[RMDB]
Annotation
Structure probing data (2A3) for a 177-nucleotide construct. Reactivities are given for positions 27 through 126.
RNA sequence: GGGAACGACUCGAGUAGAGUCGAAAAGUCUCACGAGUGCAGAGACAAAGGUAGUUGACUCCGGAGCUACCAGUACUCGAAAGAAUGCGAAAGAGUUCAUGUAUUCCAACCGGAGAAGAACUCAAAACGCUAUGGUGCUCUUCGGAGCACCAUAGCGAAAAGAAACAACAACAACAAC
Reactivity to 2A3 in 0.01 (KOAc 150mM, MgCl2 10mM, bicine 150mM(pH8.5), 24C), signal-to-noise 1, nucleotides 027 to 126: g000u040c000u000c000a000c000g000a000g000u090g080c110a080g170a000g020a280c100a010a010a010g000g000u000a000g000u000u080g020a070c000u020c000c000g000g000a000g010c000u000a000c000c000a000g000u000a000c000u000c000g070a060a000a000g230a070a120u300g020c180g090a220a050a090g000a060g030u000u000c000a000u200g100u250a270u220u000c080c000a090a080c020c000g010g000a000g000a000a000g000a000a000c040u000c000a040a050a050a050